[RMDB]
RNA sequence: GGGAACGACUCGAGUAGAGUCGAAAAGGAAGCGUAUUCUGCACGCCGCCCGUCAAGUGUUCAGCGAACGUGGUUAUGACGGCGCGACUUUUCAGGAGAUCGCCGUCCGCGCCGACCUGACCCGACCGCCUUUCUCCGCUUUCGAGCGGAGAAAGGCAAAAGAAACAACAACAACAAC
Reactivity to 2A3 in 0.01 (KOAc 150mM, MgCl2 10mM, bicine 150mM(pH8.5), 24C), signal-to-noise 2, nucleotides 027 to 126: g070g000a130a030g100c050g020u030a170u070u080c060u140g020c000a000c020g060c000c010g030c000c070c000g050u040c100a060a140g060u000g030u090u060c010a030g080c020g070a080a060c010g060u200g010g000u240u060a080u270g020a030c000g020g000c020g000c030g010a110c030u250u150u080u120c130a060g040g020a100g020a070u070c000g000c020c000g000u010c000c040g000c000g010c000c000g060a080c000c000u040g000a000c000c000c020g080a090c030c040